[RMDB]
RNA sequence: GGGAACGACUCGAGUAGAGUCGAAAAAUGCGCUGAAAAAGGUGACCUUCUCUCUCCAAAAACUCACCGGAACCUCCAAACUGGCUGAUUCCGGUGUCAAUUUUCGACACGCGCGGCGGUGUGUACCGAAGGGCCGUUUAUUCGUAAACGGCCCUUCAAAAGAAACAACAACAACAAC
Reactivity to DMS in 0.01 (KOAc 150mM, MgCl2 10mM, bicine 150mM(pH8.5), 24C), signal-to-noise 1, nucleotides 027 to 126: a120u040g020c010g090c020u020g030a040a050a000a120a200g000g010u000g000a060c010c020u000u010c070u000c020u000c020u010c020c040a000a040a020a200a070c060u020c020a000c000c030g010g050a030a050c030c010u000c020c040a110a200a220c200u000g080g000c000u010g000a100u000u060c000c000g000g000u000g000u020c060a000a090u000u020u000u000c100g000a110c210a180c050g010c060g020c060g000g020c060g000g000u010g090u000g030u050a090c040c080
Reactivity to 2A3 in 0.01 (KOAc 150mM, MgCl2 10mM, bicine 150mM(pH8.5), 24C), signal-to-noise 1, nucleotides 027 to 126: a000u070g030c000g000c000u090g090a000a100a000a000a000g090g000u050g030a050c000c040u050u040c020u000c000u000c000u000c000c000a060a000a000a000a000c060u010c020a000c000c000g020g000a000a000c030c010u000c020c020a190a130a290c200u270g030g020c060u060g040a300u040u000c010c000g000g000u000g000u000c000a000a000u000u000u000u130c060g040a000c000a000c070g090c040g000c000g080g010c030g040g000u000g000u030g040u060a090c000c000